RNA sequence: GGGAACGACUCGAGUAGAGUCGAAAAUAGAUCAUUGAUAGGAGAGAUUUCUAUUAAGAAAUUGACUUUUGUGGUUGUGGGAACUGGCAAUCGCAAAAAUCCAUAAGGCAAGCCAGUAGGCUAGAAAUUCAGGAAAGAGUGCAGUAUUGAGCCUAAAACACUUACUACAUUUCGAUGUAGUAAGUGUAAAAGAAACAACAACAACAAC
Reactivity to DMS in 0.01 (KOAc 150mM, MgCl2 10mM, bicine 150mM(pH8.5), 24C), signal-to-noise 3, nucleotides 027 to 156: u010a090g000a090u000c040a110u000u000g010a080u000a050g000g010a070g010a300g000a100u000u000u010c030u000a160u000u000a090a080g010a040a070a110u000u000g000a160c020u000u000u000u010g010u010g020g030u000u000g030u000g010g020g030a070a100c100u000g040g020c010a050a030u000c030g060c040a030a010a020a020a070u010c040c100a120u020a060a080g000g000c040a060a070g010c020c000a080g030u000a070g040g020c020u000a060g010a060a060a130u000u000c040a070g010g000a060a040a110g000a090g030u000g010c070a070g000u000a080u000u000g000a130g030c030c030u000a070a060a120
Reactivity to 2A3 in 0.01 (KOAc 150mM, MgCl2 10mM, bicine 150mM(pH8.5), 24C), signal-to-noise 3, nucleotides 027 to 156: u100a010g080a060u050c000a030u040u130g050a040u080a090g020g010a060g000a010g010a020u040u100u000c030u040a180u180u150a220a050g020a040a060a020u080u080g050a060c020u000u070u050u060g020u020g000g020u000u040g010u060g040g050g020a030a070c030u020g000g010c020a010a020u030c030g000c000a020a030a000a010a020u030c030c020a030u030a160a000g050g020c030a020a020g000c000c010a050g040u050a040g030g010c000u010a010g060a070a130a050u110u050c040a030g060g010a070a050a010g040a000g010u060g000c040a000g020u040a050u040u090g040a010g000c000c010u070a080a050a010
This 207-nucleotide RNA was probed chemically with DMS and 2A3.
The 2A3 profile rests on 2,226 reads.
The data come from the RNA Mapping Database (RMDB), library OK3TST.
The DMS profile rests on 5,652 reads.
The reactions ran in a buffer of 150 mM KOAc, 10 mM MgCl2 and 150 mM bicine (pH 8.5), at 24 C.
2A3 adducts were read by reverse transcription with SuperScript II with manganese.
For DMS the reverse transcriptase was MarathonRT.